[RMDB]
RNA sequence: GGGAACGACUCGAGUAGAGUCGAAAAGGGGUCACAAGCUUGGAUUUAUGGACGGAGGAAGGGUGAGCCAACAGCAAUCCAUCUGAAGCCUCCACGGAUGGAUUGACAUGGCUCACAUUGACGUUACGUCCAUUGUCAGCUUGUGACGGAGGCACCCGCAUAACUCAACCUUCGGGUUGAGUUAUGCAAAAGAAACAACAACAACAAC
Reactivity to 2A3 in 0.01 (KOAc 150mM, MgCl2 10mM, bicine 150mM(pH8.5), 24C), signal-to-noise 2, nucleotides 027 to 156: g110g000g050g020u000c000a000c000a000a000g040c000u180u280g160g030a050u150u270u250a010u040g010g000a020c030g040g080a160g250g190a190a140g080g010g000u000g000a000g000c000c010a050a060c060a050g020c000a000a000u000c000c000a000u020c010u000g050a090a040g020c020c010u010c020c000a000c000g000g000a010u030g000g020a000u010u010g010a010c000a030u030g000g010c010u030c000a000c000a020u030u160g090a070c030g030u050u150a010c000g000u020c000c000a000u000u000g000u000c000a000g000c000u000u000g000u000g000a000c020g000g000a000g000g000c000a010c000c000c010
Chemical mapping of a 207-nucleotide RNA with 2A3. Reactivities are given for positions 27 through 156. The reactions ran in a buffer of 150 mM KOAc, 10 mM MgCl2 and 150 mM bicine (pH 8.5), at 24 C. Source: RMDB library RNAMAK, as collected in RNAgym.